[RMDB]
RNA sequence: GGGAACGACUCGAGUAGAGUCGAAAAAGCUCCUGUUUCGACAGGAGCUGUGUGGCUGCCCUUUAGUGCUCGAUGUAGAGUGCUUUCCUGCCGGAAAGGGCUUGAGAGCUUGAUUCGUCAAGCUCAACAUGACAUGAGAAUUCGUUCUCAUGUCAUGAAAAGAAACAACAACAACAAC
Reactivity to DMS in 0.01 (KOAc 150mM, MgCl2 10mM, bicine 150mM(pH8.5), 24C), signal-to-noise 9, nucleotides 027 to 126: a010g010c000u000c000c000u000g000u000u000u020c150g010a030c000a010g010g000a010g010c000u000g000u000g020u010g010g010c170u000g010c000c010c010u000u000u000a030g020u000g010c000u000c010g010a210u010g010u010a130g000a020g010u000g010c010u000u000u000c010c010u000g010c090c060g010g000a040a030a030g010g010g010c010u000u000g000a150g000a010g000c000u000u000g000a030u000u010c180g010u000c000a010a000g010c000u000c000a050a160
Reactivity to 2A3 in 0.01 (KOAc 150mM, MgCl2 10mM, bicine 150mM(pH8.5), 24C), signal-to-noise 8, nucleotides 027 to 126: a000g000c010u010c010c000u010g020u000u070u050c180g090a010c000a000g000g000a000g000c000u000g000u020g020u030g070g040c090u070g000c000c000c000u010u040u030a030g000u020g000c010u000c020g080a130u300g090u260a100g010a010g010u020g010c000u030u020u010c010c020u050g100c030c030g010g030a040a020a020g000g010g000c000u050u110g140a090g000a000g000c010u010u010g010a020u040u070c130g050u010c080a000a010g000c000u000c000a000a000